Source: RMDB library 15KLIB, as collected in RNAgym. Chemical mapping of a 170-nucleotide RNA with 2A3. Conditions: 150 mM KOAc, 10 mM MgCl2 and 150 mM bicine (pH 8.5), 24 C. For 2A3, 3,820 sequencing reads were counted. 2A3 adducts were read by reverse transcription with SuperScript II with manganese.
RNA sequence: GGGAACGACUCGAGUAGAGUCGAAAAAUCUGGACCACCCGGGCCUUCUUCGCCGGGGGCGCCCCUUCUCCGUCCCUAUCCUUCUUUCCGAUUAUUCCUUUGAUGUUCCCCAGCCAGGGAUUUUCAUACACCUCCUGCUUCGGCAGGAGGAAAAGAAACAACAACAACAAC
Reactivity to 2A3 in 0.01 (KOAc 150mM, MgCl2 10mM, bicine 150mM(pH8.5), 24C), signal-to-noise 3, nucleotides 027 to 129: a000u040c030u030g020g000a010c000c000a080c000c000c000g030g010g000c000c000u100u070c060u110u120c060g060c000c050g000g020g000g000g030c020g040c000c000c010c000u040u000c000u000c000c000g000u050c000c000c000u070a120u010c000c000u040u050c000u060u090u010c010c000g030a020u000u090a060u100u080c040c000u120u060u230g130a060u200g020u010u020c000c060c020c000a000g030c000c000a000g010g000g060a060u030u040u060u020c070a070u080a070c000a020